[RMDB]
RNA sequence: GGGAACGACUCGAGUAGAGUCGAAAAGCUGGUGACGUCGCGGCGAUCGCCGCGUGAUCGAACUUGCAUGCCGGUCGCGCUUUUUUGGCGCGGCCGGCUCUAUUUGUGUCGUCCAUCAAGGAUGGUUCCAUGAGCAUAUGUUCGCAUAUGCUCAUGGAAAAGAAACAACAACAACAAC
Reactivity to 2A3 in 0.01 (KOAc 150mM, MgCl2 10mM, bicine 150mM(pH8.5), 24C), signal-to-noise 2, nucleotides 027 to 126: g000c030u030g000g000u030g050a080c030g000u050c010g000c020g060g000c070g090a300u300c300g000c000c000g000c000g000u020g000a130u010c000g010a030a010c000u030u040g000c010a070u100g000c000c020g000g000u010c000g030c000g020c050u040u040u110u060u250u300g040g000c000g000c000g000g000c000c020g000g000c000u000c000u000a000u000u020u040g050u010g000u010c000g020u000c040c010a030u090c070a170a110g200g030a200u170g040g030u060u000
Chemical mapping of a 177-nucleotide RNA with 2A3. It was measured as part of the RMDB library OK1LIB. The reactions ran in a buffer of 150 mM KOAc, 10 mM MgCl2 and 150 mM bicine (pH 8.5), at 24 C. Reactivities are given for positions 27 through 126. The 2A3 profile rests on 986 reads.